[RMDB]
RNA sequence: GGGAACGACUCGAGUAGAGUCGAAAAGGGGUCGCUCAUGAGUAAGCAUGUUGUCAGCGAUCGUAUGGCUGAAGCCUCCACGGCCAUAAUCGCUUGGAUUUACAUGCUGAAAUUGAGCGACGGAGGCACCCAAAAGGAAACCUUUCGAGGUUUCCAAUAGCUAGACAAACUUCGGUUUGUCUAGCUAAAAAGAAACAACAACAACAAC
Reactivity to 2A3 in 0.01 (KOAc 150mM, MgCl2 10mM, bicine 150mM(pH8.5), 24C), signal-to-noise 1, nucleotides 027 to 156: g060g000g020g000u000c000g010c000u020c010a000u000g010a000g010u000a000a000g020c000a000u000g060u000u030g000u060c090a000g000c000g020a000u070c170g010u050a010u000g020g000c000u030g030a160a050g040c000c040u010c010c020a040c010g000g000c000c000a000u000a000a020u020c000g020c030u060u140g150g000a010u100u060u300a010c000a000u010g000c000u000g000a000a000a000u020u020g000a000g000c000g000a000c000g020g020a010g000g020c010a040c000c000c020a040a080a060a110g030g010a040a000a000c010c000u060u130u260c300g130a080g020g020u000u000u020c000c000a000a000
Chemical mapping of a 207-nucleotide RNA with 2A3. It was measured as part of the RMDB library RNAMAK. Conditions: 150 mM KOAc, 10 mM MgCl2 and 150 mM bicine (pH 8.5), 24 C. Reactivities are given for positions 27 through 156. 2A3 adducts were read by reverse transcription with SuperScript II with manganese.